The data come from the RNA Mapping Database (RMDB), library 15KLIB. This 170-nucleotide RNA was probed chemically with 2A3 and DMS. For 2A3, 30,202 sequencing reads were counted. The DMS profile rests on 20,091 reads. The RNA was probed in 150 mM KOAc, 10 mM MgCl2 and 150 mM bicine (pH 8.5) at 24 C.

RNA sequence: GGGAACGACUCGAGUAGAGUCGAAAAUUUGGCAGGAUUGUUCAGAAUCUUUCUCCGCAAUGCCUAUGUGUACACUUCACAAGGGUUUGUGGUGGUCAAUGGCAAAGUUUCUACACUUGUCAAACAAAUAUCAGUACCUUCGGGUACUGAAAAAGAAACAACAACAACAAC
Reactivity to 2A3 in 0.01 (KOAc 150mM, MgCl2 10mM, bicine 150mM(pH8.5), 24C), signal-to-noise 9, nucleotides 027 to 129: u020u000u000g010g000c000a000g060g090a140u100u120g050u140u140c070a000g030a010a030u000c000u010u030u010c030u020c000c010g010c010a040a040u180g110c010c010u080a220u080g040u000g010u040a100c160a060c180u130u090c020a010c010a050a130g020g000g020u000u030u000g020u010g000g030u050g060g060u160c130a120a140u120g070g030c060a020a020a030g010u000u010u000c020u010a010c010a010c010u000u000g000u000c000a020a000a020c040a000a070a010u190a020
Reactivity to DMS in 0.01 (KOAc 150mM, MgCl2 10mM, bicine 150mM(pH8.5), 24C), signal-to-noise 8, nucleotides 027 to 129: u010u000u000g010g120c000a000g040g020a120u040u040g000u110u000c140a130g010a050a030u030c010u020u010u030c050u030c100c000g070c020a050a040u080g000c000c000u090a180u050g040u040g000u010a100c280a110c260u000u060c000a010c050a050a300g030g020g020u020u020u040g040u030g010g040u030g040g010u080c140a080a060u070g020g060c090a010a010a010g040u000u000u000c040u030a020c030a040c040u000u060g060u000c010a020a040a050c060a050a080a080u060a070